Chemical mapping of a 177-nucleotide RNA with 2A3 and DMS.
[RMDB]
RNA sequence: GGGAACGACUCGAGUAGAGUCGAAAAAUCCUACCAAUAACUUCAGCUGCAUCAUGAAGAGUAGACAGAGAUUCUGGCGGUUGAGGGUUUCUUCGUAGAGGUUGAUCGAUUCUUAAUGUCCUGUGGAUACAGCGUUUAGAUUCGUCUAAACGCUGUAAAAAGAAACAACAACAACAAC
Reactivity to 2A3 in 0.01 (KOAc 150mM, MgCl2 10mM, bicine 150mM(pH8.5), 24C), signal-to-noise 5, nucleotides 027 to 126: a000u020c010c000u000a020c010c030a040a050u060a080a020c010u010u000c000a000g000c000u000g020c010a130u040c020a080u300g070a060a050g030a030g070u120a040g040a110c100a040g140a000g010a070u040u010c000u020g030g000c010g010g000u020u010g010a030g030g020g000u010u080u040c050u010u010c020g010u000a010g060a080g050g000u000u030g010a010u000c000g010a020u020u020c010u040u160a120a070u170g020u050c010c030u070g010u090g110g030a040
Reactivity to DMS in 0.01 (KOAc 150mM, MgCl2 10mM, bicine 150mM(pH8.5), 24C), signal-to-noise 5, nucleotides 027 to 126: a050u000c000c000u000a020c030c100a110a040u030a040a060c010u010u000c010a030g010c020u010g020c010a100u010c070a070u070g020a030a020g020a130g030u010a080g020a150c230a130g010a110g000a130u010u000c020u000g010g010c030g010g010u010u010g000a030g000g000g000u020u010u020c100u000u000c260g010u010a030g000a090g020g000u000u000g010a190u010c010g000a030u000u000c020u000u000a080a070u020g000u020c000c000u000g010u000g010g000a250